Overview
This 177-nucleotide RNA was probed chemically with DMS and 2A3. For 2A3, 3,048 sequencing reads were counted. For 2A3 the reverse transcriptase was SuperScript II with manganese. Values cover nucleotides 27 to 126.
RNA sequence: GGGAACGACUCGAGUAGAGUCGAAAAACGAUGUCGUUCGCGACAUCGUAAAUUGUAUAACCUUGCUUGAAGUGUACUUGGUUGUAAAGCGAGACAAGUCAGUGAGAGUCCUAUUCGUAGGACUCAAUACCACCUAUCAUUUCGAUGAUAGGUGGUAAAAAGAAACAACAACAACAAC
Reactivity to DMS in 0.01 (KOAc 150mM, MgCl2 10mM, bicine 150mM(pH8.5), 24C), signal-to-noise 5, nucleotides 027 to 126: a030c000g010a010u000g010u000c000g020u000u020c210g040c010g020a010c000a000u000c010g010u000a000a040a060u000u000g010u000a090u000a110a140c060c010u010u000g020c040u010u010g010a030a090g010u000g010u000a080c040u000u000g010g010u010u010g010u000a050a070a110g010c030g000a050g000a080c050a010a030g000u000c060a040g010u000g010a150g000a010g010u000c000c000u000a020u000u010c180g010u000a000g010g000a010c000u000c000a030a120
Reactivity to 2A3 in 0.01 (KOAc 150mM, MgCl2 10mM, bicine 150mM(pH8.5), 24C), signal-to-noise 3, nucleotides 027 to 126: a000c020g010a000u000g010u010c000g010u040u010c150g000c000g080a000c000a010u000c000g000u000a030a020a010u100u070g090u010a090u020a140a040c000c000u000u040g030c050u060u080g090a110a020g040u030g060u170a190c020u050u070g180g010u140u080g160u190a090a030a010g060c000g010a000g000a040c020a040a020g040u020c030a010g020u060g140a100g010a000g020u000c000c010u010a020u050u050c130g050u040a000g000g010a000c000u000c000a010a000